[RMDB]
RNA sequence: GGGAACGACUCGAGUAGAGUCGAAAACCCUGUCAUGAGGCCGAAACGAAGGCACGUACCCCUUCGAAUGGCGUCGGGGAGUCAGCGGCUAUAUAUGCGCCUAAUGCUGGCGUCCGGGAACGAGCGUAUUAGACAGUAAUCUUCGGAUUACUGUCAACUCUCUUUAAUGGUUCGCCAUUAAAGAGAGAAAAGAAACAACAACAACAAC
Reactivity to DMS in 0.01 (KOAc 150mM, MgCl2 10mM, bicine 150mM(pH8.5), 24C), signal-to-noise 2, nucleotides 027 to 156: c030c000c040u000g020u000c060a160u010g000a050g000g010c000c000g010a090a110a160c020g030a070a040g030g010c100a210c170g010u020a160c070c030c000c000u000u000c090g000a090a120u000g000g010c020g000u000c000g000g020g010g000a180g030u000c040a050g020c050g020g000c100u000a080u000a120u000a100u000g020c080g030c030c000u000a050a190u010g040c020u000g020g010c020g030u000c000c030g020g010g010a070a090c040g010a180g010c030g030u000a130u020u000a240g010a020c000a020g010u000a000a000u000c010u000u000c300g020g020a030u000u000a000c000u000g020u000c000a010a090
Reactivity to 2A3 in 0.01 (KOAc 150mM, MgCl2 10mM, bicine 150mM(pH8.5), 24C), signal-to-noise 4, nucleotides 027 to 156: c000c000c000u020g100u090c130a100u150g050a030g090g100c000c000g080a030a060a030c010g000a000a010g020g080c130a010c060g140u210a090c000c010c010c040u010u020c030g090a160a100u160g030g030c060g080u060c000g000g000g010g020a090g010u010c010a010g000c000g040g000c050u030a030u010a030u000a030u300g060c030g030c040c030u140a200a080u270g000c030u000g010g010c020g190u010c040c030g000g040g050a080a060c080g020a060g080c070g000u090a090u060u050a110g000a000c010a000g000u000a000a000u000c020u040u070c180g030g000a000u000u000a000c000u000g000u000c000a000a000